An RNA of 177 nucleotides, treated with DMS and read out base by base.
The data come from the RNA Mapping Database (RMDB), library TTRINS.
The reactions ran in a buffer of 150 mM KOAc, 10 mM MgCl2 and 150 mM bicine (pH 8.5), at 24 C.
Reactivities are rounded to 0.1 and cut off at 0 and 3.
For DMS, 1,271 sequencing reads were counted.
RNA sequence: GGGAACGACUCGAGUAGAGUCGAAAAGAUAUGGAUGAGCGACAGGGAGACUCAGGCUGCGAAGAACUUCGUCGGAAACGACGAAGGGAGCAGCUGAGAGUCGAAGAACUGUCGCUCAUCCUAAGUCGUUAAGUUGAAACUUCGGUUUCAACUUAACAAAAGAAACAACAACAACAAC
Reactivity to DMS in 0.01 (KOAc 150mM, MgCl2 10mM, bicine 150mM(pH8.5), 24C), signal-to-noise 2, nucleotides 027 to 126: g010a100u000a240u020g000g000a070u000g020a030g000c000g010a030c020a010g000g000g000a200g000a030c000u000c010a300g000g000c010u010g050c000g000a030a200g010a200a220c030u020u000c000g000u000c000g010g010a090a070a150c040g010a010c020g010a000a000g000g060g010a130g020c000a000g000c000u030g040a170g000a000g000u000c000g000a070a130g000a100a190c010u000g000u000c000g040c000u000c010a010u010c020c000u010a010a030g010u000c110